An RNA of 177 nucleotides, treated with 2A3 and DMS and read out base by base.
For DMS the reverse transcriptase was MarathonRT.
The reactions ran in a buffer of 150 mM KOAc, 10 mM MgCl2 and 150 mM bicine (pH 8.5), at 24 C.
The 2A3 profile rests on 2,314 reads.

RNA sequence: GGGAACGACUCGAGUAGAGUCGAAAAUAAAAUCGUAGGGCGAGACGAUCCACGUAAAUCGCUCAAACUACUCGAGACCAAAGGAAUACGCUUCGGUAACUCGCUCUAAUCCCGAGCGAUAAAUGAAUAAUGCAUUUUCAUUCGUGAAAAUGCAUUAAAAAGAAACAACAACAACAAC
Reactivity to 2A3 in 0.01 (KOAc 150mM, MgCl2 10mM, bicine 150mM(pH8.5), 24C), signal-to-noise 2, nucleotides 027 to 126: u070a010a020a010a040u010c010g000u020a060g000g010g000c000g000a000g030a050c000g010a070u080c060c030a160c060g030u070a040a060a070u000c020g010c030u000c050a040a050a020c010u040a010c020u000c010g030a060g020a070c040c000a060a050a030g090g030a170a160u080a130c030g000c120u070u030c040g000g000u020a070a090c030u010c010g010c030u020c030u060a030a040u020c000c000c000g030a000g000c000g020a050u130a040a150a090u140g060a010a050
Reactivity to DMS in 0.01 (KOAc 150mM, MgCl2 10mM, bicine 150mM(pH8.5), 24C), signal-to-noise 3, nucleotides 027 to 126: u030a070a090a120a080u000c050g000u010a090g000g000g020c070g000a030g000a060c020g020a050u010c100c140a130c210g010u000a030a090a060u010c010g010c020u000c030a060a210a160c030u000a010c020u000c010g000a030g000a140c030c010a050a070a100g020g000a150a110u010a100c080g010c050u000u000c090g000g000u000a080a120c080u000c010g000c000u010c000u000a110a210u000c090c010c040g000a020g010c030g010a080u010a050a050a070u010g000a100a100